[RMDB]
RNA sequence: GGGAACGACUCGAGUAGAGUCGAAAAGCAACCUGGUUCUGGAGAAGAACGGCGGAGUGGCGAGGGCGACACCAAUUCUGGAGGAGGCCAGUUCAUGACGCCAGAAGUGCGUCCCUAGGCGGCGCACUCUGCCUAGAAUCUUCGGAUUCUAGGCAGAAAAAGAAACAACAACAACAAC
Reactivity to 2A3 in 0.01 (KOAc 150mM, MgCl2 10mM, bicine 150mM(pH8.5), 24C), signal-to-noise 3, nucleotides 027 to 126: g020c030a050a080c000c010u080g080g040u050u010c020u040g060g000a150g030a160a010g030a030a040c030g010g000c010g000g030a040g010u050g010g000c030g020a280g150g010g000c030g030a050c010a010c040c030a060a170u260u140c130u200g020g000a050g060g020a050g050g140c010c010a010g010u140u120c040a030u060g010a010c010g020c020c010a020g050a070a000g010u020g000c000g000u060c000c030c000u070a100g170g020c060g010g000c010g070c010a010c000
Reactivity to DMS in 0.01 (KOAc 150mM, MgCl2 10mM, bicine 150mM(pH8.5), 24C), signal-to-noise 4, nucleotides 027 to 126: g010c140a090a110c010c020u000g000g010u000u000c030u000g010g020a100g010a120a040g010a040a040c080g000g010c040g010g000a200g030u000g000g010c040g000a130g000g010g010c030g010a190c030a040c030c040a060a180u010u020c090u000g000g000a100g010g010a160g010g010c030c030a060g020u000u000c060a060u000g010a210c030g010c020c020a080g000a080a140g020u000g000c000g000u010c000c010c120u010a140g000g000c100g010g000c020g010c010a010c010